[RMDB]
RNA sequence: GGGAACGACUCGAGUAGAGUCGAAAAGAGCGUCGAGAGACGAAGAGAAGUGCAUCGAUCCACAACGGAGAACGUAAUAAUGCACACCUGUGGGUUAGUGUCCGGAACAACGGGCACAAGAGGCAGAAUGAGCUAAUAUGUUCGCAUAUUAGCUCAUAAAAGAAACAACAACAACAAC
Reactivity to 2A3 in 0.01 (KOAc 150mM, MgCl2 10mM, bicine 150mM(pH8.5), 24C), signal-to-noise 9, nucleotides 027 to 126: g060a010g040c010g000u010c010g000a020g010a000g000a080c040g030a100a000g080a010g030a230a050g020u020g020c000a010u040c030g060a070u000c010c010a060c060a190a110c150g030g010a100g030a110a020c020g020u040a080a060u110a150a030u180g020c010a010c000a010c020c010u020g010u050g030g070g020u030u070a040g000u010g000u000c000c010g020g010a060a060c080a070a050c070g000g000g000c000a000c000a000a000g040a010g040g000c020a000g030a110
Reactivity to DMS in 0.01 (KOAc 150mM, MgCl2 10mM, bicine 150mM(pH8.5), 24C), signal-to-noise 9, nucleotides 027 to 126: g000a070g020c010g010u000c010g000a210g010a240g000a020c010g000a090a070g000a120g010a110a080g010u000g000c010a020u010c060g000a090u010c010c010a060c160a080a120c140g010g000a080g000a090a110c060g020u010a060a100u030a110a060u010g010c020a020c010a120c160c010u010g010u000g000g000g000u010u020a110g010u000g010u000c000c000g000g000a130a120c240a150a160c010g010g000g000c000a000c010a030a030g000a050g000g000c030a030g000a160
This 177-nucleotide RNA was probed chemically with 2A3 and DMS. The RNA was probed in 150 mM KOAc, 10 mM MgCl2 and 150 mM bicine (pH 8.5) at 24 C. Reactivities are given for positions 27 through 126.